The data come from the RNA Mapping Database (RMDB), library M2RFPK. Structure probing data (DMS and 2A3) for a 207-nucleotide construct. The DMS profile rests on 4,392 reads. DMS adducts were read by reverse transcription with MarathonRT. Conditions: 150 mM KOAc, 10 mM MgCl2 and 150 mM bicine (pH 8.5), 24 C.
RNA sequence: GGGAACGACUCGAGUAGAGUCGAAAAAUACAAGGGGAGGUUUCGGCCAAAUGUUGUUUGCAGAAAGCGUGAGGAAGGUAGCACUUAGACACUCACGAGUAGCGGUUCGGCAGUAGUGCUAAAAUGAGACAGUACGAAAAGUUCGCUUUUCGUACAACACGAAAUACUAGUUCGCUAGUAUUUCGUGAAAAGAAACAACAACAACAAC
Reactivity to DMS in 0.01 (KOAc 150mM, MgCl2 10mM, bicine 150mM(pH8.5), 24C), signal-to-noise 2, nucleotides 027 to 156: a110u000a080c040a070a100g000g030g030g000a080g020g030u010u000u000c060g010g010c020c050a070a060a160u010g030u000u000g000u010u000u000g000c040a060g010a060a060a100g010c050g020u020g030a080g010g020a060a060g020g040u000a080g010c050a080c030u000u000a120g000a120c030a070c010u010c030a060c040g010a140g000u000a010g020c030g020g010u000u000c040g040g000c040a070g010u010a020g010u000g000c010u000a030a060a070a080u010g010a160g020a080c010a170g000u000a000c010g010a010a000a020a040g030u000u000c300g040c010u000u000u000u000c020g000u020a000c010a030a130
Reactivity to 2A3 in 0.01 (KOAc 150mM, MgCl2 10mM, bicine 150mM(pH8.5), 24C), signal-to-noise 4, nucleotides 027 to 156: a000u210a020c070a050a080g010g010g010g000a020g000g030u070u070u130c060g050g000c020c040a070a100a110u070g010u020u010g010u030u020u070g040c040a020g060a090a060a010g060c030g010u020g020a020g000g030a070a040g040g020u060a010g020c010a010c050u060u060a030g030a060c020a010c070u030c000a020c020g020a030g030u040a020g010c040g010g060u030u050c030g020g000c010a020g020u090a010g000u030g020c010u050a030a040a060a070u070g010a030g010a030c060a080g000u000a010c000g010a010a000a010a010g010u020u080c100g050c070u020u000u000u000c000g000u000a000c000a000a000